[RMDB]
Structure probing data (2A3 and DMS) for a 177-nucleotide construct. In probing experiments dimethyl sulfate is read out at A N1 and C N3, which are open when not base-paired.

RNA sequence: GGGAACGACUCGAGUAGAGUCGAAAAUUAGAUGUGACAAAGAUUACAGGAGAUCAUCACUUAUUUGUGAACAGACAAGAAGUUGAUACAUUGUUGGAAGAGGCAAUGAAUUUAGGAAAAUACAAUGAGCUUUAAAUGGGUUCGCCCAUUUAAAGCUAAAAGAAACAACAACAACAAC
Reactivity to 2A3 in 0.01 (KOAc 150mM, MgCl2 10mM, bicine 150mM(pH8.5), 24C), signal-to-noise 1, nucleotides 027 to 126: u090u040a060g110a130u080g030u030g020a010c020a030a270a000g070a110u040u060a090c050a080g090g000a080g060a070u040c000a020u030c020a030c040u060u100a090u150u070u040g020u040g050a140a060c060a120g120a110c010a090a000g070a050a010g090u070u040g020a010u030a030c000a050u000u080g020u020u030g060g030a180a020g000a000g100g000c000a030a000u060g030a040a080u060u120u160a090g000g080a070a000a020a020u200a080c020a060a120u120g000
Reactivity to DMS in 0.01 (KOAc 150mM, MgCl2 10mM, bicine 150mM(pH8.5), 24C), signal-to-noise 2, nucleotides 027 to 126: u000u000a090g010a160u010g010u010g010a140c060a100a090a040g000a180u000u000a090c070a050g010g030a130g010a050u010c060a040u000c020a030c030u000u030a160u000u010u010g020u030g010a080a100c180a060g010a100c070a020a020g020a020a060g020u010u030g020a050u000a060c030a050u000u020g000u000u020g000g010a060a100g020a070g000g020c020a020a030u010g000a090a050u000u000u000a060g010g000a070a030a030a070u020a040c160a070a080u000g000

For DMS the reverse transcriptase was MarathonRT.